[RMDB]
RNA sequence: GGGAACGACUCGAGUAGAGUCGAAAAGGGAGAUCGAUACGGCGUGUGUGAGCAGGAUCGAAGGCGGCUUCGGCUACCUCAAGGAAGCGUACACGCCUUCCGGCCAGUUCAAGCUCAAGGGCCAUGGAGAUGGUAAGGACUUCGGUCCUUACCAUCUAAAAGAAACAACAACAACAAC
Reactivity to 2A3 in 0.01 (KOAc 150mM, MgCl2 10mM, bicine 150mM(pH8.5), 24C), signal-to-noise 1, nucleotides 027 to 126: g060g040g020a100g030a120u080c070g040a030u070a160c060g020g000c030g050u080g000u050g010u030g050a020g050c010a030g090g060a080u090c050g020a020a020g060g040c020g000g000c020u040u020c040g060g000c000u060a070c000c030u090c050a020a100g060g000a050a000g000c020g000u030a020c050a000c030g000c040c040u010u030c020c040g030g000c030c000a030g000u100u130c040a130a000g000c000u010c030a030a140g000g010g000c020c000a000u080g060g040
Reactivity to DMS in 0.01 (KOAc 150mM, MgCl2 10mM, bicine 150mM(pH8.5), 24C), signal-to-noise 3, nucleotides 027 to 126: g000g000g010a060g000a050u000c090g020a120u010a090c210g010g020c060g020u000g010u010g010u010g000a090g010c020a100g000g030a060u000c130g020a080a030g020g010c010g010g020c060u000u010c110g010g040c030u000a070c040c000u000c100a110a120g010g000a090a080g010c030g020u000a060c160a120c030g000c030c000u000u000c030c040g010g030c030c020a090g000u010u010c100a100a080g020c020u000c050a070a070g000g000g020c040c060a070u000g000g000

This 177-nucleotide RNA was probed chemically with 2A3 and DMS. For 2A3 the reverse transcriptase was SuperScript II with manganese. The data come from the RNA Mapping Database (RMDB), library OK2TRN. The DMS profile rests on 2,502 reads.